[RMDB]
RNA sequence: GGGAACGACUCGAGUAGAGUCGAAAACGCCACGCCAAGUGUGGCUGCUACCAAUGCACUCCACGCACUCACUUCCUAUAGCGCAUCGCCUCCAAGCAUUUACUGCGAUGCGGCGGCCGGAGUCCGCCCCUGGCAGCAUGUUCGCAUGCUGCCAGGGAAAAGAAACAACAACAACAAC
Reactivity to 2A3 in 0.01 (KOAc 150mM, MgCl2 10mM, bicine 150mM(pH8.5), 24C), signal-to-noise 7, nucleotides 027 to 126: c040g020c000c010a020c010g040c030c150a240a170g100u100g000u020g160g000c000u020g010c010u070a090c010c050a040a080u130g000c010a020c010u030c010c000a050c040g010c010a020c010u050c020a040c030u090u070c020c030u130a090u130a120g060c030g000c010a020u020c020g030c010c030u090c060c040a110a090g040c040a060u090u130u210a140c070u100g000c000g030a040u040g000c000g010g010c000g000g000c010c060g060g020a030g030u010c010c000g040c010
Reactivity to DMS in 0.01 (KOAc 150mM, MgCl2 10mM, bicine 150mM(pH8.5), 24C), signal-to-noise 2, nucleotides 027 to 126: c140g010c020c000a030c020g000c070c140a150a070g030u000g030u010g000g000c110u000g020c070u040a170c090c030a140a090u030g000c010a030c040u010c040c030a060c110g010c030a040c000u000c020a030c100u010u010c050c010u000a050u020a130g010c080g020c060a040u020c050g010c000c060u000c120c130a100a090g020c080a100u040u020u030a020c090u010g000c000g040a050u020g000c050g000g020c000g020g020c020c060g000g040a090g000u010c000c000g030c150
This 177-nucleotide RNA was probed chemically with 2A3 and DMS. The RNA was probed in 150 mM KOAc, 10 mM MgCl2 and 150 mM bicine (pH 8.5) at 24 C. The data come from the RNA Mapping Database (RMDB), library OK1LIB.